Structure probing data (2A3 and DMS) for a 177-nucleotide construct. DMS adducts were read by reverse transcription with MarathonRT. The reactions ran in a buffer of 150 mM KOAc, 10 mM MgCl2 and 150 mM bicine (pH 8.5), at 24 C. 2A3 adducts were read by reverse transcription with SuperScript II with manganese. The data come from the RNA Mapping Database (RMDB), library OK2TST.
RNA sequence: GGGAACGACUCGAGUAGAGUCGAAAACAACGACGUGAUUACACCGCCGCCCGCACUGCAUAUCAGAAUGUCCUGACGCGGGAGCCAGCUAACGCCGAUGCCAUUCUUGGUCUGACGGAAGUGGAUAGACCAUAGUACCGUUCGCGGUACUAUGGUCAAAAGAAACAACAACAACAAC
Reactivity to 2A3 in 0.01 (KOAc 150mM, MgCl2 10mM, bicine 150mM(pH8.5), 24C), signal-to-noise 1, nucleotides 027 to 126: c040a000a010c040g120a010c030g000u090g040a130u080u120a060c050a000c000c040g070c000c000g000c020c000c010g000c040a080c040u070g040c000a000u000a050u220c020a000g060a150a060u090g030u100c030c000u040g020a040c070g000c000g070g040g000a000g030c010c000a000g060c020u090a050a010c020g000c010c000g020a010u060g060c010c010a030u040u000c050u080u100g070g000u060c020u020g010a080c020g040g000a060a060g010u080g080g000a050u070a090
Reactivity to DMS in 0.01 (KOAc 150mM, MgCl2 10mM, bicine 150mM(pH8.5), 24C), signal-to-noise 2, nucleotides 027 to 126: c060a160a170c070g030a000c070g000u010g010a110u010u010a130c080a060c080c030g020c020c050g020c020c020c030g000c100a090c030u010g030c100a080u000a080u000c060a070g000a040a030u000g020u010c070c030u000g030a130c300g010c040g000g030g030a110g010c080c050a090g000c030u020a050a080c040g020c000c020g000a080u020g010c150c060a020u010u010c060u000u010g030g000u000c030u010g010a140c060g030g000a090a060g030u000g000g000a110u010a090